[RMDB]
RNA sequence: GGGAACGACUCGAGUAGAGUCGAAAAUGAAGCGGUGCCUGCGGAAGCCGCCGCCCGGCUGGAUUCGCCAGCACGCGCACCUGUCCGACCUCGAACGCACUUUCGCGCUCGUCGAGAAGCACUGCAGCGACAAGGCUCUCGACAUUCUCGACAGCCUUGCGCGUAAGAUAUUCGUAUCUUACGCGCAAAAAGAAACAACAACAACAAC
Reactivity to 2A3 in 0.01 (KOAc 150mM, MgCl2 10mM, bicine 150mM(pH8.5), 24C), signal-to-noise 2, nucleotides 027 to 156: u140g060a120a010g010c010g000g010u000g020c010c060u050g000c060g050g000a010a030g080c100c030g060c000c100g080c040c070c030g000g020c050u220g040g070a180u170u190c050g030c100c010a020g000c020a040c020g200c000g000c000a050c040c030u090g100u120c060c040g010a020c010c030u030c040g050a110a040c040g030c030a050c060u130u150u160c130g000c010g030c060u050c080g070u010c000g030a020g000a060a050g030c040a050c120u080g000c060a070g020c040g150a120c050a040a020g010g010c000u020c000u000c000g020a020c030a140u190u050c060u000c040g000a000c030a030g020c020c000u020
Source information
The data come from the RNA Mapping Database (RMDB), library OK3TST. The record gives the reactivity of an RNA of 207 nucleotides to 2A3. The reactions ran in a buffer of 150 mM KOAc, 10 mM MgCl2 and 150 mM bicine (pH 8.5), at 24 C. The 2A3 profile rests on 733 reads.